Source information
The data come from the RNA Mapping Database (RMDB), library TTRDEL. The record gives the reactivity of an RNA of 177 nucleotides to DMS and 2A3. The DMS profile rests on 895 reads. Values are in units of 0.01, from 0 to 300, in steps of 10. The reactions ran in a buffer of 150 mM KOAc, 10 mM MgCl2 and 150 mM bicine (pH 8.5), at 24 C. For 2A3 the reverse transcriptase was SuperScript II with manganese. For DMS the reverse transcriptase was MarathonRT.

RNA sequence: GGGAACGACUCGAGUAGAGUCGAAAAGAUAUGGACCAGCUCCCCACCUGUACCUUCGAAGAACUCGGAAACGAGGGAGAAGCUGUACAGAGGCUGGUCCUAAGUCAAAGUGCAGUUCGCUGCACAAGUAGGUCCUAUGGUUCGCCAUAGGACCUACAAAAGAAACAACAACAACAAC
Reactivity to DMS in 0.01 (KOAc 150mM, MgCl2 10mM, bicine 150mM(pH8.5), 24C), signal-to-noise 2, nucleotides 027 to 126: g000a140u000a170u000g000g010a050c000c030a020g020c000u020c160c000c010c080a300c070c020u000g000u000a010c000c000u000u000c000g000a040a130g000a070a190c000u000c000g000g000a120a090a210c010g000a010g000g000g010a120g010a050a000g030c300u000g000u000a010c030a020g070a060g010g000c000u000g000g040u000c000c000u020a000a070g030u010c100a020a110a120g020u000g000c010a010g010u000u000c220g030c010u000g000c010a000c040a040a110
Reactivity to 2A3 in 0.01 (KOAc 150mM, MgCl2 10mM, bicine 150mM(pH8.5), 24C), signal-to-noise 2, nucleotides 027 to 126: g090a110u230a200u200g000g010a000c000c030a010g040c000u070c030c020c010c000a000c010c010u000g010u020a000c000c000u000u040c020g200a300a070g000a100a040c000u000c020g010g000a080a060a050c010g000a010g010g050g020a030g020a020a000g080c290u300g010u000a000c000a000g010a000g000g020c020u010g010g000u000c020c000u000a070a030g020u000c080a080a010a020g020u000g010c010a000g010u040u220c270g020c190u020g000c000a000c000a020a020